[RMDB]
RNA sequence: GGGAACGACUCGAGUAGAGUCGAAAAAGGUUCUGUUGGCCCGAGAAGGGGUAUGUCAAGAUUUCGCCCGGUUGGCGAUUGCCUGCUUGCGUGCCAACGGUCUGGCGGCUAGCUAUGUAUCCGGGUAGCCUCACUACUGAUUCGUCAGUAGUGAGGCAAAAGAAACAACAACAACAAC
Reactivity to DMS in 0.01 (KOAc 150mM, MgCl2 10mM, bicine 150mM(pH8.5), 24C), signal-to-noise 2, nucleotides 027 to 126: a070g000g010u000u000c050u000g010u000u000g020g000c020c030c010g010a150g000a100a070g030g010g020g020u000a060u000g010u000c090a070a110g030a260u000u000u010c050g000c000c000c080g060g000u000u000g010g000c010g000a100u000u000g010c010c010u020g020c000u000u000g030c070g020u010g030c090c090a070a060c050g020g010u000c110u000g010g020c030g000g000c080u000a130g030c000u000a040u000g030u000a100u010c030c010g000g000g000u000a160